[RMDB]
RNA sequence: GGGAACGACUCGAGUAGAGUCGAAAAGAAUAAAUCCCUCCCUCCUAAACGCGCGCAAAUAAAGGGAGGGCAACAGGGAUGAGUAGGCCUUUUGGCCAUAACCCAAAAGCGCGCGACGGUGCAAGAAGACGUAUAUGGUGUUCGCACCAUAUACGUCAAAAGAAACAACAACAACAAC
Reactivity to DMS in 0.01 (KOAc 150mM, MgCl2 10mM, bicine 150mM(pH8.5), 24C), signal-to-noise 2, nucleotides 027 to 126: g000a220a090u000a110a100a080u000c000c000c000u010c000c000c000u000c000c000u000a000a030a090c060g000c100g070c170g060c000a000a190a090u020a110a040a210g000g010g000a010g000g000g020c300a000a000c020a000g000g000g080a000u040g000a080g060u000a060g040g000c000c000u000u000u000u070g000g030c040c000a120u000a090a050c090c000c000a040a030a220a030g090c000g080c000g000c000g010a070c050g020g000u000g010c010a160a070g000a140a050
Reactivity to 2A3 in 0.01 (KOAc 150mM, MgCl2 10mM, bicine 150mM(pH8.5), 24C), signal-to-noise 3, nucleotides 027 to 126: g030a030a070u120a070a030a000u000c000c000c000u000c000c000c000u030c010c000u110a100a130a080c010g010c000g000c000g050c010a060a100a030u140a090a110a000g000g010g010a000g000g010g000c010a060a000c060a040g000g020g000a020u040g010a050g090u200a060g010g010c030c010u180u300u170u300g030g000c000c000a030u100a020a070c000c000c000a040a060a000a000g010c000g000c020g000c000g000a000c000g040g000u150g040c000a050a000g070a110a030

Chemical mapping of a 177-nucleotide RNA with DMS and 2A3. For DMS the reverse transcriptase was MarathonRT. The data come from the RNA Mapping Database (RMDB), library OK1LIB. As a SHAPE reagent, 2A3 marks flexible, mostly unpaired nucleotides at the ribose 2'-OH.